The record gives the reactivity of an RNA of 177 nucleotides to DMS and 2A3.
The reactions ran in a buffer of 150 mM KOAc, 10 mM MgCl2 and 150 mM bicine (pH 8.5), at 24 C.
For 2A3, 3,459 sequencing reads were counted.
Reactivities are given for positions 27 through 126.
Reactivities are rounded to 0.1 and cut off at 0 and 3.
Source: RMDB library M2PK50, as collected in RNAgym.
DMS adducts were read by reverse transcription with MarathonRT.
RNA sequence: GGGAACGACUCGAGUAGAGUCGAAAAAGUGGCUAGUUCGCUAGCCACUAAAGACCGCACGGCACCGGAAAUAAGCCGAAACGCAAACAGAAGCGACUGAAAGACUCCAAACAUUCGUGUUUGGAAACAUGACUAUGUACUUCGGUACAUAGUCAUGAAAAGAAACAACAACAACAAC
Reactivity to DMS in 0.01 (KOAc 150mM, MgCl2 10mM, bicine 150mM(pH8.5), 24C), signal-to-noise 4, nucleotides 027 to 126: a010g040u000g010g000c020u010a010g000u000u000c180g030c010u000a010g010c000c000a000c000u000a010a090a110g010a270c050c010g020c110a100c050g000g000c030a080c100c080g010g010a090a070a070u020a080a090g030c000c010g010a050a080a090c120g000c030a050a070a130c130a090g000a150a100g010c040g020a100c120u000g000a070a090a110g000a150c090u000c000c000a010a020a010c010a030u000u010c170g010u000g020u000u000u000g000g000a000a070a150
Reactivity to 2A3 in 0.01 (KOAc 150mM, MgCl2 10mM, bicine 150mM(pH8.5), 24C), signal-to-noise 3, nucleotides 027 to 126: a000g010u000g010g000c000u010a000g010u030u040c090g000c080u010a000g010c010c010a000c000u000a000a000a000g010a020c010c020g000c040a100c050g000g000c030a030c080c090g080g110a210a230a110u220a140a030g030c010c010g010a070a030a010c040g010c020a120a100a150c030a110g080a180a020g030c010g060a050c060u100g060a040a100a060g040a040c050u000c010c010a010a010a000c010a010u060u090c210g090u020g000u010u000u000g000g090a010a000a000